[RMDB]
This 177-nucleotide RNA was probed chemically with 2A3 and DMS. The RNA was probed in 150 mM KOAc, 10 mM MgCl2 and 150 mM bicine (pH 8.5) at 24 C. 2A3 adducts were read by reverse transcription with SuperScript II with manganese. The 2A3 profile rests on 18,216 reads. For DMS the reverse transcriptase was MarathonRT.
RNA sequence: GGGAACGACUCGAGUAGAGUCGAAAAGAGGUGUUCGAGAGGCAGAGGGUUGAGUCGGGUAGGAAUUACUUCUGCAGCUCUAAUGACGUGCCUCUUGGCCCUGAGGAUGAUCUAACUGUCAAUGAGCGGUUAUAGAAUAGUUCGCUAUUCUAUAACCAAAAGAAACAACAACAACAAC
Reactivity to 2A3 in 0.01 (KOAc 150mM, MgCl2 10mM, bicine 150mM(pH8.5), 24C), signal-to-noise 9, nucleotides 027 to 126: g070a000g000g020u070g030u160u170c030g000a010g000a010g010g000c010a000g030a030g090g060g000u070u090g040a040g040u120c100g070g070g080u070a030g030g120a100a120u200u040a090c020u040u040c010u030g020c020a040g010c010u010c020u060a090a130u170g080a060c080g040u060g000c000c000u000c000u000u010g010g010c010c010c000u040g060a110g090g010a080u100g010a010u050c020u080a040a100c050u080g070u130c060a050a150u130g040a080g090c090
Reactivity to DMS in 0.01 (KOAc 150mM, MgCl2 10mM, bicine 150mM(pH8.5), 24C), signal-to-noise 9, nucleotides 027 to 126: g010a020g010g020u000g020u010u000c080g010a030g010a030g010g010c010a040g010a080g010g000g010u000u000g010a060g020u010c080g010g010g020u000a070g010g010a090a140u010u000a070c060u000u000c020u000g010c030a080g010c010u000c000u010a080a100u010g010a120c200g010u010g010c000c000u000c000u000u000g000g010c010c010c010u010g010a090g010g010a110u000g000a070u000c080u000a080a120c090u010g010u000c050a080a120u010g000a110g010c200